[RMDB]
RNA sequence: GGGAACGACUCGAGUAGAGUCGAAAACAGGAGUUGCUGAAUGAGACGGUGUGCGUAUAUGGGGAAUCAUCUUAACACUGAUGCACUUUGUUUUCCAUUUGGUUAUGGCGUAUCCACCCCCGGCUAAUACGUUAUUCUGAUUCGUCAGAAUAACGUAAAAAGAAACAACAACAACAAC
Reactivity to DMS in 0.01 (KOAc 150mM, MgCl2 10mM, bicine 150mM(pH8.5), 24C), signal-to-noise 8, nucleotides 027 to 126: c080a080g000g010a100g020u010u010g020c020u000g010a090a060u010g010a100g020a080c080g010g010u000g010u000g010c100g010u010a070u010a080u000g000g000g010g010a130a100u010c090a040u000c060u000u000a080a090c090a060c140u000g000a080u000g010c090a050c050u000u010u010g010u000u000u000u000c030c020a070u000u000u010g010g010u000u000a050u010g010g010c110g000u010a090u000c010c020a180c030c010c010c010c020g010g010c120u000a060a170
Reactivity to 2A3 in 0.01 (KOAc 150mM, MgCl2 10mM, bicine 150mM(pH8.5), 24C), signal-to-noise 4, nucleotides 027 to 126: c050a030g060g040a060g090u130u090g040c020u040g040a050a090u070g010a030g000a040c020g040g000u020g010u060g040c040g050u060a090u030a050u200g060g000g010g050a040a070u090c020a020u040c040u060u080a140a030c040a020c120u030g040a040u080g010c020a010c000u050u050u060g070u060u040u030u000c030c020a040u050u040u050g070g000u070u070a060u110g070g000c060g010u040a090u030c000c000a030c010c010c000c000c010g020g050c040u040a070a040
Chemical mapping of a 177-nucleotide RNA with DMS and 2A3. It was measured as part of the RMDB library OK2TST. For DMS, 12,065 sequencing reads were counted. For 2A3 the reverse transcriptase was SuperScript II with manganese. DMS adducts were read by reverse transcription with MarathonRT. High DMS reactivity at an A or C suggests that its Watson-Crick edge is free.